[RMDB]
RNA sequence: GGGAACGACUCGAGUAGAGUCGAAAACGGAAAGCCCGGCCGGCUUGCCGAAGCGGGCUUCCAGCGCGGCCGGUUCGAAGCGCGCCAGCAGGUGGCGGAUGGCGGCCUGCACGCCGGCCAUCACCGAUAAUUUACCUGGUUUCGACCAGGUAAAUUAAAAAGAAACAACAACAACAAC
Reactivity to 2A3 in 0.01 (KOAc 150mM, MgCl2 10mM, bicine 150mM(pH8.5), 24C), signal-to-noise 1, nucleotides 027 to 126: c010g010g000a100a040a020g020c020c000c000g110g050c010c010g040g020c070u120u120g020c000c020g030a050a000g300c000g000g000g000c000u000u000c000c000a020g040c080g000c050g020g030c010c010g000g040u090u140c050g040a040a010g000c040g000c020g020c060c000a030g030c040a040g040g080u120g080g020c010g040g050a030u050g080g020c010g040g010c000c010u030g040c060a040c030g010c000c000g030g000c000c000a010u040c020a020c030c020g020a070
Reactivity to DMS in 0.01 (KOAc 150mM, MgCl2 10mM, bicine 150mM(pH8.5), 24C), signal-to-noise 3, nucleotides 027 to 126: c070g020g010a040a050a110g020c040c010c010g030g000c050c010g000g000c010u000u000g020c010c020g000a040a240g020c020g000g000g000c000u000u010c020c020a110g020c110g010c070g010g010c030c020g010g010u000u010c100g000a130a140g000c020g020c020g000c000c050a080g010c080a080g010g030u000g000g020c050g010g010a080u000g000g000c020g000g000c070c050u000g020c090a160c140g010c010c000g000g000c000c010a040u000c040a130c040c030g010a180